Chemical mapping of a 177-nucleotide RNA with 2A3 and DMS. The RNA was probed in 150 mM KOAc, 10 mM MgCl2 and 150 mM bicine (pH 8.5) at 24 C. For 2A3 the reverse transcriptase was SuperScript II with manganese. For DMS the reverse transcriptase was MarathonRT.
RNA sequence: GGGAACGACUCGAGUAGAGUCGAAAAGAAGACGGACGGAGGAUUGGGCGCUGGCACGCCCAUGUUUAUCAGCGAGGUGAUGCACGGAUCCGGGUGCAACAUUUUGUAGGGGACGACAUCCGGACGCAAUGCUCGUCACGUUCGCGUGACGAGCAUUAAAAGAAACAACAACAACAAC
Reactivity to 2A3 in 0.01 (KOAc 150mM, MgCl2 10mM, bicine 150mM(pH8.5), 24C), signal-to-noise 2, nucleotides 027 to 126: g030a010a020g040a000c000g000g000a000c010g000g130a080g020g040a020u000u060g050g010g000c010g040c180u090g120g000c100a000c010g010c010c050c000a000u020g000u000u080u020a180u000c000a000g070c000g060a000g050g070u030g000a030u010g020c060a030c090g050g010a040u000c040c000g000g000g000u020g030c020a080a030c020a080u060u140u110u070g080u120a080g000g030g000g040a040c050g000a020c010a000u010c000c000g000g000a000c000g000c010
Reactivity to DMS in 0.01 (KOAc 150mM, MgCl2 10mM, bicine 150mM(pH8.5), 24C), signal-to-noise 1, nucleotides 027 to 126: g010a060a050g020a010c040g040g040a150c020g040g010a050g010g010a080u000u010g000g000g040c060g020c080u000g030g010c060a190c100g020c060c000c030a030u020g080u000u070u000a080u010c040a180g020c000g000a070g020g030u020g000a050u000g000c020a060c000g000g030a140u030c040c040g000g000g090u000g020c020a030a030c060a100u010u040u000u010g070u010a130g000g000g000g060a070c040g000a110c040a090u000c020c000g000g000a000c050g020c200